This 177-nucleotide RNA was probed chemically with 2A3 and DMS.
The reactions ran in a buffer of 150 mM KOAc, 10 mM MgCl2 and 150 mM bicine (pH 8.5), at 24 C.
For DMS, 5,772 sequencing reads were counted.
High 2A3 reactivity points to a flexible backbone, as in loops and unpaired stretches.
[RMDB]
RNA sequence: GGGAACGACUCGAGUAGAGUCGAAAAGAUAUGGACAGUCGGGAGAGGUUAACUACUAUUCGGAAACGAACGAAUAGUCCACCUCAUCGAUCGACUGUCCUAAGUCAAACACCUCUUCGGAGGUGAACUAUAUUUCUUCGUUCGCGAAGAAAUAUAGAAAAGAAACAACAACAACAAC
Reactivity to 2A3 in 0.01 (KOAc 150mM, MgCl2 10mM, bicine 150mM(pH8.5), 24C), signal-to-noise 4, nucleotides 027 to 126: g000a020u050a040u110g000g000a000c000a000g000u010c010g000g040g000a050g000a000g030g030u110u120a090a020c030u060a010c000u000a090u010u000c010g070g000a270a300a210c120g110a110a030c010g010a050a080u000a000g010u020c010c030a000c000c000u030c020a290u270c030g080a090u060c000g000a020c000u000g000u020c000c000u000a000a000g000u000c010a000a030a040c010a000c020c000u000c010u050u080c260g160g010a000g000g000u000g010a000a000
Reactivity to DMS in 0.01 (KOAc 150mM, MgCl2 10mM, bicine 150mM(pH8.5), 24C), signal-to-noise 5, nucleotides 027 to 126: g010a070u000a300u010g000g000a010c010a010g010u010c000g010g010g000a060g010a010g010g010u000u000a060a040c060u010a010c010u000a040u000u000c010g000g010a060a080a180c300g010a090a120c010g000a020a010u010a000g000u000c140c060a010c000c000u000c000a200u000c120g000a060u010c010g010a000c000u010g010u000c000c010u000a000a090g010u000c030a120a110a210c020a000c000c010u000c000u000u000c180g020g010a010g020g000u000g010a020a120
The data come from the RNA Mapping Database (RMDB), library TTRDEL.